Chemical mapping of a 177-nucleotide RNA with 2A3 and DMS.
RNA sequence: GGGAACGACUCGAGUAGAGUCGAAAAUCGGCUCUGCGCGCCUGAGACCAGCACCGAGAGGAGACAGCGGUGAGCGCGGCAAAGGCCACUCGGCGCGGGCAGGGGAGACCGGCCGGGACAGCUCAGCUGUAAACAUUUCAUUCGUGAAAUGUUUACAAAAAGAAACAACAACAACAAC
Reactivity to 2A3 in 0.01 (KOAc 150mM, MgCl2 10mM, bicine 150mM(pH8.5), 24C), signal-to-noise 9, nucleotides 027 to 126: u120c010g010g000c000u000c010u060g020c040g000c010g020c010c020u080g040a080g060a130c010c020a020g020c010a030c000c020g050a040g010a040g120g040a050g030a050c050a040g020c020g040g050u070g060a050g030c120g000c010g030g010c040a130a100a050g120g010c010c010a040c010u010c010g020g000c170g020c030g150g010g000c030a070g050g030g000g000a060g020a020c010c000g000g000c010c000g000g010g020a050c020a020g010c010u020c040a020g010c020
Reactivity to DMS in 0.01 (KOAc 150mM, MgCl2 10mM, bicine 150mM(pH8.5), 24C), signal-to-noise 7, nucleotides 027 to 126: u030c070g010g010c010u010c020u000g010c030g000c070g000c070c030u020g000a120g000a130c030c030a100g020c030a070c030c020g000a080g010a100g010g010a090g000a090c120a100g010c040g000g000u010g000a050g010c040g000c080g000g000c080a070a100a120g010g000c010c030a180c020u010c010g000g000c020g010c030g000g000g000c050a080g000g000g000g000a090g010a110c040c040g000g000c010c020g000g000g000a110c100a080g010c020u010c040a120g020c110

DMS adducts were read by reverse transcription with MarathonRT.
The reactions ran in a buffer of 150 mM KOAc, 10 mM MgCl2 and 150 mM bicine (pH 8.5), at 24 C.